[RMDB]
Conditions: 150 mM KOAc, 10 mM MgCl2 and 150 mM bicine (pH 8.5), 24 C. The record gives the reactivity of an RNA of 177 nucleotides to DMS and 2A3. 2A3 is a SHAPE reagent: it acylates the 2'-hydroxyl of flexible nucleotides of all four kinds. Values cover nucleotides 27 to 126. DMS (dimethyl sulfate) methylates the pairing face of unpaired adenines and cytosines. DMS adducts were read by reverse transcription with MarathonRT.
RNA sequence: GGGAACGACUCGAGUAGAGUCGAAAAAACAGCUUACCGGCCGAGGUUCGAGGCGCCCAAAAUGAUCGGGGCUCAAGUUCGCCACCGAGACCUAACGGCACGGGUAACACCGUGAUCCAGUAGGUUGAUCCCUUUUUUUAUUCGUAAAAAAAGGGAUAAAAGAAACAACAACAACAAC
Reactivity to DMS in 0.01 (KOAc 150mM, MgCl2 10mM, bicine 150mM(pH8.5), 24C), signal-to-noise 9, nucleotides 027 to 126: a060a050c120a090g010c070u010u010a090c100c020g000g000c030c030g010a120g000g010u010u000c040g010a090g010g010c070g000c020c010c020a050a060a110a090u040g010a100u010c050g000g010g000g000c020u020c110a080a110g000u010u010c060g000c000c000a120c030c020g010a060g000a020c000c000u000a040a050c050g000g000c000a000c000g000g000g000u000a120a120c190a200c000c000g000u000g000a110u040c010c010a140g010u000a020g000g000u000u000g000
Reactivity to 2A3 in 0.01 (KOAc 150mM, MgCl2 10mM, bicine 150mM(pH8.5), 24C), signal-to-noise 9, nucleotides 027 to 126: a000a000c070a020g040c030u090u080a060c020c020g010g010c010c010g070a070g080g060u050u060c020g030a030g030g000c010g040c010c000c000a060a090a020a070u270g040a080u040c020g000g010g000g000c010u030c070a060a080g030u060u050c020g010c020c020a130c020c010g020a020g010a010c000c000u020a060a030c020g000g000c000a000c000g000g000g000u010a010a010c020a010c020c000g000u000g000a050u050c000c020a040g070u010a000g030g000u010u040g010